[RMDB]
RNA sequence: GGGAACGACUCGAGUAGAGUCGAAAAGAUAUGGAGAUGGACGAUAAGUCCGUAUCGGAAACGAUAUAGGACUUUUGACGUCCUGCCUCCUAAGUCAAACCAUUAUUUACUUCGGUAAAUAAUGGAACCAGUCAUGUCAGUUCGCUGACAUGACUGGAAAAGAAACAACAACAACAAC
Reactivity to 2A3 in 0.01 (KOAc 150mM, MgCl2 10mM, bicine 150mM(pH8.5), 24C), signal-to-noise 1, nucleotides 027 to 126: g000a000u030a020u000g000g020a000g010a040u020g030g000a000c030g050a120u070a300a050g000u000c020c000g020u030a000u000c000g030g000a040a020a000c010g000a000u000a020u120a300g000g000a010c000u060u080u140u300g230a070c020g000u000c000c000u000g090c000c000u000c000c000u040a070a020g050u030c060a080a010a120c010c010a010u020u000a000u000u000u010a000c020u020u030c300g080g010u000a000a000a000u010a000a020u010g000g000a000a040
Reactivity to DMS in 0.01 (KOAc 150mM, MgCl2 10mM, bicine 150mM(pH8.5), 24C), signal-to-noise 1, nucleotides 027 to 126: g010a030u000a300u000g000g000a030g030a300u000g010g000a030c000g030a090u000a050a010g010u000c000c000g000u000a030u010c000g020g000a010a060a120c000g010a000u000a000u000a150g050g000a010c020u000u000u000u000g010a240c080g000u000c000c000u000g000c130c010u000c010c020u000a030a150g000u000c040a140a100a190c010c000a010u000u000a010u000u000u000a000c010u000u020c150g050g010u000a000a010a000u000a010a010u000g000g000a000a110
Conditions: 150 mM KOAc, 10 mM MgCl2 and 150 mM bicine (pH 8.5), 24 C. This 177-nucleotide RNA was probed chemically with 2A3 and DMS. The 2A3 profile rests on 2,037 reads. As a SHAPE reagent, 2A3 marks flexible, mostly unpaired nucleotides at the ribose 2'-OH. Values are in units of 0.01, from 0 to 300, in steps of 10. It was measured as part of the RMDB library TTRDEL.